Chemical mapping of a 177-nucleotide RNA with DMS and 2A3. 2A3 adducts were read by reverse transcription with SuperScript II with manganese. The reactions ran in a buffer of 150 mM KOAc, 10 mM MgCl2 and 150 mM bicine (pH 8.5), at 24 C. For DMS, 943 sequencing reads were counted. It was measured as part of the RMDB library OK2TRN. DMS adducts were read by reverse transcription with MarathonRT. For 2A3, 1,005 sequencing reads were counted.

[RMDB]
RNA sequence: GGGAACGACUCGAGUAGAGUCGAAAAUCACCAGAGAAAAAUGGAUGCUCCAAGAUCCAGACAGCUACAUCCAAUUCAUAGCACAACCUGGUGGUGAACAAACCUGCAGUGCUGUCUUAGACAUAGCACGUACGAUCGGAUUCGUCCGAUCGUACGUAAAAGAAACAACAACAACAAC
Reactivity to DMS in 0.01 (KOAc 150mM, MgCl2 10mM, bicine 150mM(pH8.5), 24C), signal-to-noise 2, nucleotides 027 to 126: u000c010a000c000c000a030g000a170g000a010a060a040a120a070u000g000g020a010u020g020c150u010c140c120a070a220g020a100u020c020c060a060g000a030c080a040g000c030u010a130c040a040u020c020c020a030a110u010u000c130a050u010a080g000c020a040c100a060a220c060c000u000g020g030u000g000g000u010g000a070a090c210a130a020a070c010c010u000g020c120a100g040u010g000c000u010g000u000c020u000u000a130g040a120c100a040u000a060g000c080
Reactivity to 2A3 in 0.01 (KOAc 150mM, MgCl2 10mM, bicine 150mM(pH8.5), 24C), signal-to-noise 1, nucleotides 027 to 126: u020c000a010c040c000a020g040a010g020a040a060a060a010a000u070g000g000a030u020g060c050u060c100c020a100a060g040a110u010c030c020a040g010a060c030a000g000c000u060a020c050a060u130c020c000a050a010u090u030c060a100u150a100g060c080a050c000a070a030c010c000u010g010g000u000g010g040u040g000a080a010c030a040a100a080c000c000u000g000c080a050g020u010g070c000u020g010u020c000u030u120a030g050a030c060a090u140a080g140c040